Background
Source: RMDB libraries RFM100 and RFMREP, as collected in RNAgym. Structure probing data (2A3 and DMS) for a 177-nucleotide construct. The reactions ran in a buffer of 150 mM KOAc, 10 mM MgCl2 and 150 mM bicine (pH 8.5), at 24 C.
[RMDB]
RNA sequence: GGGAACGACUCGAGUAGAGUCGAAAAAUAGCGUUCUGCAUAUUUAGAGUGUAUGCCUACCCAGAGUAGGAAACCCAGCAAGUAUGCGUCGCUUCCACCUUGAACUUAAGGGUUCAAGGGUAAUGACCUUAUCAAAUGGUUUCGACCAUUUGAUAAGAAAAGAAACAACAACAACAAC
Reactivity to 2A3 in 0.01 (KOAc 150mM, MgCl2 10mM, bicine 150mM(pH8.5), 24C), signal-to-noise 9, nucleotides 027 to 126: a000u120a010g000c020g060u120u050c110u220g010c020a000u030a010u020u040u050a130g040a070g070u140g010u030a040u280g040c000c000u000a010c000c010c070a060g030a070g030u000a000g000g000a020a010a010c020c020c010a030g080c060a040a010g010u000a000u000g000c000g010u010c000g000c000u040u000c010c010a040c000c000u000u000g000a000a010c000u060u080a150a160g220g010g000u000u000c000a000a000g020g000g000u010a010a040u110g080a030c000
Reactivity to DMS in 0.01 (KOAc 150mM, MgCl2 10mM, bicine 150mM(pH8.5), 24C), signal-to-noise 9, nucleotides 027 to 126: a070u020a030g010c000g010u020u010c020u030g050c000a010u000a000u000u000u000a130g010a200g020u010g010u000a020u010g010c000c000u000a000c000c020c210a170g010a160g010u000a000g000g000a010a030a010c000c020c020a130g000c220a050a030g000u000a010u000g000c000g020u000c000g000c000u000u010c010c010a130c000c000u000u010g000a010a000c000u000u010a120a130g020g000g010u010u000c000a000a000g000g000g000u010a030a060u010g000a150c220
Values are in units of 0.01, from 0 to 300, in steps of 10.